[RMDB]
Structure probing data (2A3 and DMS) for a 177-nucleotide construct.
For DMS, 2,264 sequencing reads were counted.
2A3 adducts were read by reverse transcription with SuperScript II with manganese.
It was measured as part of the RMDB library TTRDES.
Conditions: 150 mM KOAc, 10 mM MgCl2 and 150 mM bicine (pH 8.5), 24 C.
RNA sequence: GGGAACGACUCGAGUAGAGUCGAAAAGAUAUGGACCACGCGUUCCAACAGCUACCAGUCGGAAACGACUGUGUAGACAUGGAACCGUGGUCCUAAGUCAAAAGUGCAUUCCUUCGGGAAUGCACAACUCACGAAAAUUGUUCGCAAUUUUCGUGAGAAAAGAAACAACAACAACAAC
Reactivity to 2A3 in 0.01 (KOAc 150mM, MgCl2 10mM, bicine 150mM(pH8.5), 24C), signal-to-noise 2, nucleotides 027 to 126: g000a010u010a000u060g010g010a000c000c000a000c010g120c190g010u020u000c030c030a300a070c130a250g000c010u000a010c000c010a010g010u020c010g000g010a000a010a000c010g000a000c000u020g020u040g000u030a000g000a000c010a300u300g000g010a020a000c010c000g000u000g010g000u000c000c000u010a000a000g000u010c000a010a000a050a090g000u000g020c010a010u010u010c000c000u000u040c260g110g010g000a000a010u000g000c010a010c020a000a000
Reactivity to DMS in 0.01 (KOAc 150mM, MgCl2 10mM, bicine 150mM(pH8.5), 24C), signal-to-noise 2, nucleotides 027 to 126: g000a000u000a070u010g000g000a000c020c000a010c000g000c300g030u000u000c000c010a160a070c240a130g030c000u000a000c000c000a010g020u000c000g020g000a010a020a020c000g010a010c000u000g000u020g000u000a010g010a020c050a300u020g000g000a000a000c010c000g020u000g000g010u000c000c000u000a000a060g010u020c020a070a090a120a140g020u000g000c010a000u000u000c000c000u000u020c160g030g000g010a010a000u000g000c000a000c010a020a070